[RMDB]
RNA sequence: GGGAACGACUCGAGUAGAGUCGAAAAGAUAUGGACUAGCCUUAGCAAGGUUGGAGGAGGCGUUGAAAUCGCUCGGAAACGAGCGAUGGAGCCUUGAAGACUGAUGACCUAAGGCUAGUCCUAAGUCCUAUUAGCCUAUGUUCGCAUAGGCUAAUAGAAAAGAAACAACAACAACAAC
Reactivity to 2A3 in 0.01 (KOAc 150mM, MgCl2 10mM, bicine 150mM(pH8.5), 24C), signal-to-noise 2, nucleotides 027 to 126: g050a040u120a060u160g020g000a000c000u030a010g010c020c000u020u010a010g030c060a300a300g010g070u080u060g040g020a160g300g170a020g000g020c030g050u180u060g000a000a030a000u000c000g000c000u000c000g000g030a040a100a030c010g000a000g000c020g000a000u000g000g000a010g000c000c000u020u050g010a040a000g000a010c010u040g080a300u230g100a200c000c030u010a010a000g000g010c000u000a000g000u010c000c000u000a000a010g000u000c000
Reactivity to DMS in 0.01 (KOAc 150mM, MgCl2 10mM, bicine 150mM(pH8.5), 24C), signal-to-noise 7, nucleotides 027 to 126: g000a100u000a270u000g010g010a020c000u000a010g010c000c000u010u000a020g020c080a100a170g010g010u010u000g000g010a300g020g000a020g010g010c000g010u010u020g010a130a210a030u000c000g020c010u000c000g000g010a100a090a240c020g010a010g010c000g000a000u000g010g000a150g020c000c000u010u000g010a300a240g010a020c010u000g000a130u010g010a110c300c000u000a020a010g000g010c010u000a000g010u000c010c000u000a010a050g000u010c050
Record summary:
An RNA of 177 nucleotides, treated with 2A3 and DMS and read out base by base. The reactions ran in a buffer of 150 mM KOAc, 10 mM MgCl2 and 150 mM bicine (pH 8.5), at 24 C. It was measured as part of the RMDB library TTRINS.